[RMDB]
RNA sequence: GGGAACGACUCGAGUAGAGUCGAAAAGUAGUUGUUCGCAACUACAAAAAAGAUAUGGAUCAUGAUGAGGAGCUUGGAUUUAUGGGAUCGGAAACGAUCCCAUUGUCAGCUCCCAUCCGCUGAUCCUAAGUCAAAAAGCCGCUGUUCGCAGCGGCAACUUUUGUGCUUGAUUCGUCAAGCACAAAAGAAAAGAAACAACAACAACAAC
Reactivity to 2A3 in 0.01 (KOAc 150mM, MgCl2 10mM, bicine 150mM(pH8.5), 24C), signal-to-noise 2, nucleotides 027 to 156: g000u000a000g000u000u020g020u000u110c280g020c070a010a000c000u050a010c030a000a170a010a000a020a000g100a020u120a040u130g000g000a010u000c010a030u120g000a010u020g060a160g030g010a020g000c040u070u160g200g010a040u270u300u070a000u020g010g000g000a000u000c020g060g010a100a050a030c010g000a000u000c010c000c000a000u000u010g000u000c000a010g000c000u000c000c000c000a000u000c000c000g000c000u000g010a000u020c000c000u000a020a000g030u030c030a030a010a030a170a000g010c000c030g000c010u020g020u030u060c230g000c080a000g000c000g000g070c000a000a000
An RNA of 207 nucleotides, treated with 2A3 and read out base by base. Values are in units of 0.01, from 0 to 300, in steps of 10. It was measured as part of the RMDB library RNAMAK. The RNA was probed in 150 mM KOAc, 10 mM MgCl2 and 150 mM bicine (pH 8.5) at 24 C. The 2A3 profile rests on 1,658 reads.